Record summary
This 177-nucleotide RNA was probed chemically with 2A3 and DMS. It was measured as part of the RMDB library M2PK90. Reactivities are rounded to 0.1 and cut off at 0 and 3. The RNA was probed in 150 mM KOAc, 10 mM MgCl2 and 150 mM bicine (pH 8.5) at 24 C.
RNA sequence: GGGAACGACUCGAGUAGAGUCGAAAAUUAUUGAGCGUAGAUGUCUCUGUCACGAUACGAGUAAGUGACUCUCGUGUACUACUGGCGAAAGAGACAGAGACAUUAUAUGCUCGUGCCAGUCAAUAAAAUGGCAAGAUAUAUUCGUAUAUCUUGCCAUAAAAGAAACAACAACAACAAC
Reactivity to 2A3 in 0.01 (KOAc 150mM, MgCl2 10mM, bicine 150mM(pH8.5), 24C), signal-to-noise 3, nucleotides 027 to 126: u130u100a060u060u210g000a000g000c000g000u010a000g030a010u010g010u000c000u000c000u000g010u010c000a010c100g030a020u030a120c010g010a010g020u080a130a190g040u080g260a020c020u010c010u010c040g150u140g040u060a070c040u010a020c010u080g160g030c070g100a070a060a040g090a020g000a000c010a000g000a000g000a000c000a000u000u000a000u000a000u030g010c000u000c010g000u000g030c010c000a140g080u260c050a130a150u110a160a200a030
Reactivity to DMS in 0.01 (KOAc 150mM, MgCl2 10mM, bicine 150mM(pH8.5), 24C), signal-to-noise 7, nucleotides 027 to 126: u010u010a060u010u010g010a000g020c010g050u000a010g000a020u000g000u000c000u000c000u000g010u010c000a120c080g010a180u010a060c020g010a020g010u000a030a070g020u000g000a070c080u010c180u010c160g010u010g020u000a040c030u000a050c020u000g000g010c090g010a080a090a180g000a080g010a010c000a010g010a010g010a020c000a000u000u000a060u000a010u000g010c000u000c000g000u000g000c030c030a140g010u010c130a070a100u010a050a090a080